[RMDB]
Record summary: The record gives the reactivity of an RNA of 207 nucleotides to 2A3 and DMS. The RNA was probed in 150 mM KOAc, 10 mM MgCl2 and 150 mM bicine (pH 8.5) at 24 C. For 2A3, 2,883 sequencing reads were counted. 2A3 adducts were read by reverse transcription with SuperScript II with manganese. It was measured as part of the RMDB library OK3TST. Reactivities are given for positions 27 through 156.
RNA sequence: GGGAACGACUCGAGUAGAGUCGAAAAAGUUCUCAUCCAGCUAGGAUGGGAGUGAGACUCACUCGGAUGGGAGUGAGACGAAUUACCUUAGACGGUGCGACUAUGUCAAGUUCCAUCCCUCACUCACGCAGUUAAGACACACUUCUCAGGCUAGGAACUUAUUCAGCAGUUUCGACUGCUGAAUAAGAAAAGAAACAACAACAACAAC
Reactivity to 2A3 in 0.01 (KOAc 150mM, MgCl2 10mM, bicine 150mM(pH8.5), 24C), signal-to-noise 4, nucleotides 027 to 156: a000g040u020u000c000u020c010a010u010c000c010a020g300c150u280a090g010g010a000u000g010g010g000a020g000u020g020a050g020a000c000u010c020a010c000u000c000g040g030a070u090g050g030g000a010g030u000g000a020g000a000c050g040a060a070u140u070a110c010c000u070u090a060g030a090c070g030g000u030g040c080g040a050c040u120a050u260g060u070c040a040a030g030u060u010c010c000a090u080c040c050c000u010c010a020c000u010c010a070c080g010c020a040g010u060u090a100a000g080a000c010a000c010a040c070u080u030c020u030c040a010g050g000c030u060a010g100g040a060a050
Reactivity to DMS in 0.01 (KOAc 150mM, MgCl2 10mM, bicine 150mM(pH8.5), 24C), signal-to-noise 2, nucleotides 027 to 156: a140g010u020u000c010u000c000a040u000c000c000a300g070c190u050a220g000g020a040u000g000g010g000a040g000u000g010a130g050a100c010u000c000a030c010u000c020g020g030a090u000g000g030g030a090g000u040g000a110g020a090c030g000a140a090u000u020a140c030c060u000u010a170g000a090c020g020g010u000g010c060g000a280c010u000a100u010g000u000c040a060a080g000u000u010c020c010a140u000c040c040c000u010c030a060c000u010c010a090c010g000c040a300g000u020u000a070a120g000a170c010a060c030a070c070u000u000c010u000c060a120g010g050c000u020a080g000g020a100a200